[RMDB]
RNA sequence: GGGAACGACUCGAGUAGAGUCGAAAACAUGCAGGACCCCCGAGCAUCCGACAAAGGGAUAUAGAAGCGUUAACGAUAGUCUCCAACUCAUGGAAAUCCGGCGGACAUCAACUCCUCUCAAUUAUAACUCCAUUAGGGGAUUCGUCCCCUAAUGGAGAAAAGAAACAACAACAACAAC
Reactivity to 2A3 in 0.01 (KOAc 150mM, MgCl2 10mM, bicine 150mM(pH8.5), 24C), signal-to-noise 5, nucleotides 027 to 126: c010a020u190g020c040a050g020g060a120c000c000c000c010c010g010a050g010c010a030u040c020c030g050a090c170a060a100a080g120g010g010a020u060a020u020a120g130a090a020g050c030g030u080u070a060a020c070g030a070u070a090g050u010c020u000c040c010a070a090c050u060c080a070u080g060g010a040a020a050u020c030c000g030g010c020g010g030a010c000a040u050c030a040a030c010u000c000c000u000c000u010c020a010a020u230u120a100u180a230a090
Reactivity to DMS in 0.01 (KOAc 150mM, MgCl2 10mM, bicine 150mM(pH8.5), 24C), signal-to-noise 3, nucleotides 027 to 126: c090a060u040g010c050a040g000g010a160c030c000c020c010c010g000a050g000c120a070u000c030c010g000a120c220a110a150a150g030g000g000a030u030a180u020a060g020a100a110g000c070g000u040u010a060a100c050g010a120u020a100g000u010c030u020c020c070a050a100c060u020c040a030u000g030g000a030a070a120u000c050c020g000g000c000g050g000a120c080a040u020c040a040a080c030u000c000c000u000c050u000c060a020a060u060u030a090u030a080a210